[RMDB]
RNA sequence: GGGAACGACUCGAGUAGAGUCGAAAAGCCAUGGACCUGCGCAAGACCAUCGACGUUGUGAUGGCAAACGGCAAUACCAAUCGAAAUAAGGCGCUAGACCUGCUUGGCGUCAAAGGGUCUACAGCGCGCCGUACGGGCGGCAUGGUUGGCCUGCCUGGGAUACAUAACGUUUCGACGUUAUGUAUCCAAAAGAAACAACAACAACAAC
Reactivity to 2A3 in 0.01 (KOAc 150mM, MgCl2 10mM, bicine 150mM(pH8.5), 24C), signal-to-noise 5, nucleotides 027 to 156: g040c020c010a020u050g070g010a090c010c020u100g000c080g010c050a070a040g060a140c000c000a010u010c010g120a140c150g080u110u100g080u130g060a040u020g000g000c010a070a080a000c050g010g000c020a040a020u080a140c010c030a020a080u120c070g090a040a010a120u230a140a060g050g000c000g000c000u010a010g000a020c010c000u050g040c090u130u100g060g030c070g020u090c070a020a040a040g010g000g000u000c000u020a050c040a060g020c010g000c010g000c020c010g020u050a070c060g050g040g000c000g000g030c030a060u110g050g000u030u030g030g000c020c020u010g010c010c010u020g010
Reactivity to DMS in 0.01 (KOAc 150mM, MgCl2 10mM, bicine 150mM(pH8.5), 24C), signal-to-noise 2, nucleotides 027 to 156: g030c010c010a060u020g010g030a070c010c010u010g010c080g060c020a220a130g020a100c000c010a060u000c010g010a050c170g040u000u000g040u000g030a090u000g010g030c000a040a100a080c090g020g020c020a100a070u010a220c040c030a070a140u000c050g010a100a060a140u010a050a080g030g030c020g030c020u010a050g000a040c010c020u000g020c110u010u000g010g020c110g020u010c050a060a100a100g010g000g010u000c000u000a050c150a090g020c020g020c030g030c000c000g020u020a050c080g000g020g020c080g040g000c060a060u000g000g010u010u000g000g020c040c080u000g000c020c010u030g020
An RNA of 207 nucleotides, treated with 2A3 and DMS and read out base by base. For DMS the reverse transcriptase was MarathonRT. Values cover nucleotides 27 to 156. 2A3 adducts were read by reverse transcription with SuperScript II with manganese.